[RMDB]
RNA sequence: GGGAACGACUCGAGUAGAGUCGAAAACAGAGGCGGUACUUUAACGUGGAGUACGACUCACUUUUAAAGAAGUUCAUGUCUGAAGGUGCGAGUCAAGGAUCUUCCACGCCCAAGGACGAGAAACGUGAAUGGCGUACUACUUCGGUAGUACGCCAUUAAAAGAAACAACAACAACAAC
Reactivity to DMS in 0.01 (KOAc 150mM, MgCl2 10mM, bicine 150mM(pH8.5), 24C), signal-to-noise 2, nucleotides 027 to 126: c190a070g000a110g040g020c020g050g000u010a020c020u020u010u000a090a090c220g040u000g000g000a080g000u000a040c060g060a020c000u000c000a080c010u000u000u000u000a050a110a070g000a030a170g030u010u060c150a050u060g000u000c030u030g050a130a080g000g080u030g020c100g000a040g020u020c060a120a110g010g000a070u000c110u020u030c000c010a070c000g020c040c050c030a050a150g000g000a050c050g030a180g010a000a060a060c120g000u000g000
Reactivity to 2A3 in 0.01 (KOAc 150mM, MgCl2 10mM, bicine 150mM(pH8.5), 24C), signal-to-noise 2, nucleotides 027 to 126: c060a000g040a040g130g000c030g000g110u150a060c020u130u030u130a240a060c070g110u080g000g000a030g000u040a010c000g020a060c000u000c050a020c030u030u070u000u120a180a260a070g170a110a000g020u210u200c050a060u260g050u050c050u070g020a080a000g080g000u160g080c070g030a060g020u020c080a040a070g080g020a060u030c070u070u000c030c060a020c060g040c010c010c000a000a000g000g010a010c030g060a120g010a050a120a010c030g060u100g110